RNA sequence: GGGAACGACUCGAGUAGAGUCGAAAAGCGGGGCCUUGCGAGAGCUUGUUCUCCGCCUGAGGAGGCCAAGAGAAACUUACAUGCGGAUGGGUUUAUAAGAGAGACAGGGCCAAGAACGCAGGUGAAGCAGUGGGAAGGUUUCUGGAAAAUGCGGACACCGAUUUUAUAGGUUCGCCUAUAAAAUCGGAAAAGAAACAACAACAACAAC
Reactivity to 2A3 in 0.01 (KOAc 150mM, MgCl2 10mM, bicine 150mM(pH8.5), 24C), signal-to-noise 1, nucleotides 027 to 156: g050c020g020g060g000g010c020c020u060u070g010c020g020a040g040a030g040c020u010u030g000u100u020c000u000c000c000g030c010c050u050g040a020g030g010a000g000g000c010c010a030a000g050a000g020a030a080a000c020u070u060a020c060a100u100g040c030g050g100a090u050g070g010g010u040u070u030a230u050a110a050g000a000g000a000g000a030c050a090g000g000g030c000c000a010a040g030a090a020c080g000c040a000g010g030u070g050a040a010g040c010a020g050u090g040g010g020a060a030g000g030u030u040u050c060u040g020g010a050a110a000a000u110g070c090g000g000a010c010a000